[RMDB]
RNA sequence: GGGAACGACUCGAGUAGAGUCGAAAAUCUAUCACCUAGGCUGGAGUGCAUGUUUUUGAGACAGGGUCUUGCUCUAUCACCUAGGCUGGAGUGCAUGAUCAUGGCUCACUAUAGCCUUGAACUCCUGGAGUGGAGUGUUAUUCGUAACACUCCACUCAAAAGAAACAACAACAACAAC
Reactivity to 2A3 in 0.01 (KOAc 150mM, MgCl2 10mM, bicine 150mM(pH8.5), 24C), signal-to-noise 3, nucleotides 027 to 126: u060c030u030a160u140c040a030c050c010u020a000g040g040c080u040g030g030a040g030u050g010c050a090u030g120u040u080u140u180u200g220a170g020a010c040a050g200g080g040u010c040u030u020g000c000u000c000u030a120u070c020a020c030c020u010a030g050g030c030u000g000g010a020g010u060g000c080a090u180g020a020u110c010a030u070g020g000c010u040c030a120c060u150a110u250a180g000c000c000u000u030g010a000a010c000u000c020c040u030g070
Reactivity to DMS in 0.01 (KOAc 150mM, MgCl2 10mM, bicine 150mM(pH8.5), 24C), signal-to-noise 4, nucleotides 027 to 126: u000c060u020a140u000c090a150c020c020u000a040g020g020c150u010g000g000a040g030u000g010c050a040u010g000u000u000u010u000u010g000a130g000a030c040a060g000g030g010u010c050u010u010g010c000u000c020u000a060u010c160a100c030c030u010a050g000g000c180u000g020g000a040g010u010g000c140a050u010g020a160u000c020a070u000g010g020c000u000c210a100c280u010a070u010a060g030c020c020u020u000g000a050a050c070u000c010c010u010g010